[RMDB]
Source: RMDB library OK3TST, as collected in RNAgym. The record gives the reactivity of an RNA of 207 nucleotides to 2A3 and DMS. DMS adducts were read by reverse transcription with MarathonRT. For 2A3, 6,147 sequencing reads were counted. The RNA was probed in 150 mM KOAc, 10 mM MgCl2 and 150 mM bicine (pH 8.5) at 24 C. High 2A3 reactivity points to a flexible backbone, as in loops and unpaired stretches.
RNA sequence: GGGAACGACUCGAGUAGAGUCGAAAAACACUGAACAUAUGGGCAUUUAGCAUUGAGCAUAACUAAAUGUUAGCUCACCUCACUCACAAGAGAACAAAUGAGCAUCAGUUUUAAAUGAUAUAGUGGGCACCAAUAAACAUGUAUUUAAAACAAUGAAGUAUAUUAUCGAGUUCGCUCGAUAAUAUACAAAAGAAACAACAACAACAAC
Reactivity to 2A3 in 0.01 (KOAc 150mM, MgCl2 10mM, bicine 150mM(pH8.5), 24C), signal-to-noise 8, nucleotides 027 to 156: a010c060a010c030u070g040a110a010c050a070u160a130u140g040g030g000c020a030u030u040u050a060g020c070a060u060u150g050a050g020c120a140u120a160a020c010u040a080a060a040u110g000u040u060a020g000c000u000c000a020c000c010u040c010a040c020u070c010a040c030a140a090g030a010g030a090a010c050a040a150a050u100g010a010g020c020a030u050c010a010g000u000u010u070u150a060a090a030u080g040a020u040a000u020a170g040u060g020g010g000c030a020c040c020a040a040u110a100a100a020c030a030u090g050u140a100u030u100u080a030a070a010a010c030a040a060u120g020a120a020
Reactivity to DMS in 0.01 (KOAc 150mM, MgCl2 10mM, bicine 150mM(pH8.5), 24C), signal-to-noise 3, nucleotides 027 to 156: a050c030a150c050u000g040a050a100c060a120u000a070u020g020g020g000c000a020u000u010u000a020g010c040a130u000u000g010a110g030c110a120u000a070a080c010u010a010a060a030u010g010u000u000a110g030c010u000c000a030c060c010u000c080a130c050u000c030a090c160a100a180g010a120g010a120a090c040a030a060a090u000g000a030g020c030a160u000c060a110g000u000u010u020u000a020a060a080u000g000a080u000a040u000a060g030u000g040g010g030c020a190c070c060a040a100u010a050a090a050c050a070u000g010u000a060u010u000u000a010a020a040a040c030a050a060u010g000a080a240